The record gives the reactivity of an RNA of 177 nucleotides to DMS and 2A3. For DMS the reverse transcriptase was MarathonRT. For DMS, 2,116 sequencing reads were counted. Values cover nucleotides 27 to 126. 2A3 adducts were read by reverse transcription with SuperScript II with manganese. The RNA was probed in 150 mM KOAc, 10 mM MgCl2 and 150 mM bicine (pH 8.5) at 24 C.

RNA sequence: GGGAACGACUCGAGUAGAGUCGAAAAGAUAUGGACCAUGCCUGCAACAGCUCCACGUGUCGGAAACGACAUGGAGACAUGCAGUCAUGGUCCUAAGUCAAAAGCUGUAGGCUUCGGCCUACAGCAACUAUCAGAGGAGCUUCGGCUCCUCUGAUAGAAAAGAAACAACAACAACAAC
Reactivity to DMS in 0.01 (KOAc 150mM, MgCl2 10mM, bicine 150mM(pH8.5), 24C), signal-to-noise 2, nucleotides 027 to 126: g000a010u000a030u000g010g010a030c000c000a000u000g000c090c000u000g000c010a200a030c200a170g000c000u000c000c000a040c300g040u000g000u000c000g010g000a000a020a030c010g040a000c000a090u000g000g010a020g030a010c080a140u020g010c000a010g000u010c010a000u000g000g010u000c000c000u000a000a060g000u010c010a110a110a150a190g020c000u010g010u010a010g000g020c010u000u010c300g020g000c000c010u000a000c000a020g000c000a010a030
Reactivity to 2A3 in 0.01 (KOAc 150mM, MgCl2 10mM, bicine 150mM(pH8.5), 24C), signal-to-noise 3, nucleotides 027 to 126: g000a000u020a020u040g000g000a000c010c000a000u000g000c030c000u070g080c300a300a060c070a300g000c010u020c010c050a130c290g240u170g000u070c010g010g000a000a010a000c000g000a000c010a020u050g000g010a010g000a010c120a230u300g000c010a010g000u010c000a000u000g000g010u000c010c010u000a000a000g000u010c000a020a020a040a090g020c000u010g000u020a000g000g020c010u080u070c300g260g040c000c010u000a020c000a010g000c030a000a020